[RMDB]
RNA sequence: GGGAACGACUCGAGUAGAGUCGAAAAUGAUUACUGGGCCCGGCAUAUCCGGGCGGUGGUGCGGUUUGGCGACAGUGUUCGUAGUGCCCACUGCGCCGGUGCCAGUCGUUUCAUCGAAGUCGGGCCCCAAUCAUGUUAGCUUCGGCUAACAUGAUUGAAAAGAAACAACAACAACAAC
Reactivity to DMS in 0.01 (KOAc 150mM, MgCl2 10mM, bicine 150mM(pH8.5), 24C), signal-to-noise 4, nucleotides 027 to 126: u030g010a140u030u020a080c090u020g000g010g000c000c000c000g000g000c000a160u010a060u010c000c000g000g000g010c000g000g020u000g010g010u050g020c000g000g020u030u020u050g030g000c000g000a020c020a270g010u050g010u040u000c010g020u000a090g010u050g010c010c010c010a020c010u000g000c000g020c010c010g000g020u010g000c160c170a080g000u000c020g010u000u010u000c030a140u030c060g000a100a100g010u000c010g020g000g010c000c010c000
Reactivity to 2A3 in 0.01 (KOAc 150mM, MgCl2 10mM, bicine 150mM(pH8.5), 24C), signal-to-noise 9, nucleotides 027 to 126: u120g030a050u080u180a110c060u060g000g000g020c010c020c020g000g000c040a070u100a050u180c010c000g020g020g000c020g010g010u010g010g030u290g000c040g040g120u110u210u300g240g000c030g020a030c050a260g170u150g060u300u020c010g010u050a050g070u020g100c000c000c000a000c000u000g000c120g120c000c000g010g000u030g010c020c020a010g030u030c020g010u000u080u170c180a250u200c050g010a040a000g000u000c000g000g000g020c000c000c000